The record gives the reactivity of an RNA of 207 nucleotides to 2A3 and DMS. DMS adducts were read by reverse transcription with MarathonRT.
RNA sequence: GGGAACGACUCGAGUAGAGUCGAAAAGACAAGAUUCCUGCCCCUAUGGAGUUGGCAUUCUUGUGUGGAGAAGAGAAUAAACACACUAAUAUGUGGUAUUAACAUUUAUCACACGUUGAUGAUAUAUGCAAGGAAAAAUAAAUAAGCAUGAAGGGCAGCUUACACAGUUUUUCGAAACUGUGUAAGCAAAAGAAACAACAACAACAAC
Reactivity to 2A3 in 0.01 (KOAc 150mM, MgCl2 10mM, bicine 150mM(pH8.5), 24C), signal-to-noise 4, nucleotides 027 to 156: g090a020c060a030a040g030a080u080u070c000c010u030g020c010c000c010c010u060a110u180g050g010a050g070u110u070g030g030c040a060u040u030c040u060u090g030u040g060u060g050g040a090g030a140a010g040a020g030a050a050u090a080a100a000c060a010c010a010c090u060a070a090u100a050u200g020u010g000g000u030a010u050u050a090a040c020a030u030u120u090a030u020c010a010c000a000c130g060u070u070g030a100u010g020a000u040a010u020a010u160g010c000a030a020g060g000a050a150a020a010a030u250a040a120a060u160a050a020g000c030a020u210g050a030a000g000g020g000c000a000
Reactivity to DMS in 0.01 (KOAc 150mM, MgCl2 10mM, bicine 150mM(pH8.5), 24C), signal-to-noise 2, nucleotides 027 to 156: g020a150c080a080a060g030a100u000u020c020c000u020g010c010c020c010c010u010a100u000g020g020a130g000u020u000g000g010c030a070u010u000c000u000u000g040u000g040u000g020g000a130g030a130a150g000a220g010a060a150u010a050a040a070c010a130c030a070c020u000a070a040u000a070u000g020u000g010g020u000a020u000u020a070a060c100a110u010u000u000a010u010c000a060c000a030c050g040u000u000g000a000u000g020a090u000a040u000a040u010g010c000a040a050g000g030a000a070a110a060a140u000a050a050a100u000a060a070g010c040a040u050g010a060a040g040g050g090c040a100

For 2A3, 1,826 sequencing reads were counted. The DMS profile rests on 3,429 reads.